[RMDB]
The record gives the reactivity of an RNA of 207 nucleotides to 2A3. For 2A3 the reverse transcriptase was SuperScript II with manganese. The reactions ran in a buffer of 150 mM KOAc, 10 mM MgCl2 and 150 mM bicine (pH 8.5), at 24 C.

RNA sequence: GGGAACGACUCGAGUAGAGUCGAAAAAGCCUACCAUCACAUGCGUUCUAGGGUUAACCUGAAGGUGUGAAGCUGAUGGGAAAAAGUAACCCAAACUGUAUGUGACAGUGAGGGGGCAGGCUAGAUUCCUAUGGGCAAUGUAAAUGAACACUCAUCUGCUUAUGCUUGAGUUCGCUCAAGCAUAAGCAAAAGAAACAACAACAACAAC
Reactivity to 2A3 in 0.01 (KOAc 150mM, MgCl2 10mM, bicine 150mM(pH8.5), 24C), signal-to-noise 3, nucleotides 027 to 156: a020g010c000c000u000a000c000c040a020u000c000a000c000a020u020g050c140g190u000u060c100u300a060g100g000g030u210u260a160a190c000c020u000g000a010a000g050g030u040g000u030g020a040a020g130c050u050g010a000u020g010g020g040a070a030a010a100a000g130u100a070a090c010c000c000a010a010a010c040u020g030u030a090u160g230u150g170a000c000a000g010u010g030a020g000g000g000g030g000c020a020g050g000c000u000a020g000a200u020u070c000c000u000a080u050g000g020g000c060a080a100u070g070u130a110a160a120u180g090a070a000c020a000c010u010c010a080u000c070u050